[RMDB]
RNA sequence: GGGAACGACUCGAGUAGAGUCGAAAACUGCGAUGCCGUAAAGUAGAGCGAAUCCUUUCAAAGCCGGACUCAGAUCGGAUAGAGGUCUGCAACUCGACCCGGUGAAUUCAGAGUCGCUAGUAAUCGCGAAAUUAUUAUUAUUCGUAAUAAUAAUUUCAAAAGAAACAACAACAACAAC
Reactivity to 2A3 in 0.01 (KOAc 150mM, MgCl2 10mM, bicine 150mM(pH8.5), 24C), signal-to-noise 1, nucleotides 027 to 126: c020u000g000c000g000a010u040g030c010c020g040u040a000a040a010g070u020a020g020a010g070c010g000a010a030u030c000c000u030u130u070c090a080a050a000g040c010c010g070g030a010c010u000c020a010g020a030u020c000g100g000a060u150a070g240a020g010g000u010c000u030g020c050a070a010c050u040c160g120a130c000c000c000g000g000u150g030a120a110u260u040c070a000g030a010g040u000c000g010c000u010a000g020u010a010a080u020c010g010c000

This 177-nucleotide RNA was probed chemically with 2A3. Source: RMDB library OK1LIB, as collected in RNAgym.